[RMDB]
RNA sequence: GGGAACGACUCGAGUAGAGUCGAAAACGCUACCGAUGGCGUAUUUUCCUUCACUGAAUCUAGUGAUAUCGAGGAAGAGGCAAUCGAUGUUACAUUGCCCCAGGAAGAGGUUGAGGGCUCUGGUAGAACCUGAUAUCAGUUUCGACUGAUAUCAGGUAAAAGAAACAACAACAACAAC
Reactivity to DMS in 0.01 (KOAc 150mM, MgCl2 10mM, bicine 150mM(pH8.5), 24C), signal-to-noise 8, nucleotides 027 to 126: c040g010c010u000a150c100c130g000a090u010g000g010c020g000u000a050u000u010u000u000c010c000u000u000c040a070c030u000g010a160a150u000c090u010a050g020u000g000a040u000a040u000c080g000a060g000g010a080a080g000a060g000g020c040a070a050u000c060g000a090u000g000u000u000a050c090a100u000u000g000c030c010c020c040a130g000g000a080a060g000a090g000g010u000u000g010a090g010g000g000c060u010c040u010g010g010u000a070g010a090
Reactivity to 2A3 in 0.01 (KOAc 150mM, MgCl2 10mM, bicine 150mM(pH8.5), 24C), signal-to-noise 5, nucleotides 027 to 126: c000g000c010u020a060c040c090g160a120u180g020g000c020g000u030a090u040u030u020u010c000c000u010u080c020a020c020u050g090a140a200u080c060u090a100g010u000g020a020u020a050u140c050g020a030g030g050a080a070g040a060g090g020c030a020a030u030c030g040a030u070g040u090u050a050c040a110u050u200g040c010c010c000c000a010g030g020a040a040g020a030g040g030u080u100g030a100g000g040g000c020u010c040u060g030g000u030a030g020a090